[RMDB]
The record gives the reactivity of an RNA of 207 nucleotides to DMS and 2A3. The DMS profile rests on 1,616 reads. The RNA was probed in 150 mM KOAc, 10 mM MgCl2 and 150 mM bicine (pH 8.5) at 24 C. High DMS reactivity at an A or C suggests that its Watson-Crick edge is free.
RNA sequence: GGGAACGACUCGAGUAGAGUCGAAAAGGUGAUAAUAGAAGAGAUGGAUCGAGAUCAACACUUCAUCGUUAUCACUGAUGGAAGCAAUUAUCCCCCUGGAUAUUUUGACUUUCCAGAUAGCGACACAGAAGAACCAGAUGACUAUGCUGAGUUCUUAGAGGCUCUCAUAAUUCGUUAUGAGAGCCUCAAAAGAAACAACAACAACAAC
Reactivity to DMS in 0.01 (KOAc 150mM, MgCl2 10mM, bicine 150mM(pH8.5), 24C), signal-to-noise 1, nucleotides 027 to 156: g000g000u010g000a020u000a020a030u000a040g020a030a140g000a030g020a090u030g020g000a130u020c060g000a280g010a190u000c030a000a050c050a140c030u000u000c020a140u000c030g000u000u000a000u000c010a030c040u010g010a120u010g010g000a120a100g010c050a020a050u000u000a030u000c000c010c230c230c100u060g000g000a040u010a010u000u000u000u000g010a120c030u000u010u000c000c070a150g030a180u020a070g010c000g000a140c060a080c110a170g010a110a060g010a020a030c020c010a060g010a130u000g030a110c230u000a080u000g020c030u000g010a180g000u000u000c000u010u000a240
Reactivity to 2A3 in 0.01 (KOAc 150mM, MgCl2 10mM, bicine 150mM(pH8.5), 24C), signal-to-noise 1, nucleotides 027 to 156: g000g000u000g020a060u030a040a040u070a130g060a030a010g030a010g010a030u050g030g050a100u090c060g030a020g080a210u010c040a050a080c030a030c020u000u160c060a080u020c000g010u010u030a010u000c010a000c030u060g020a020u060g020g010a030a030g010c000a000a010u050u000a060u030c050c010c000c060c120u100g020g000a000u020a060u040u090u030u010g040a070c010u060u080u030c000c000a000g000a010u030a010g050c060g060a000c030a000c000a200g230a030a000g000a000a020c000c030a000g000a000u090g100a200c150u090a130u300g000c030u000g000a100g110u000u000c000u000u000a020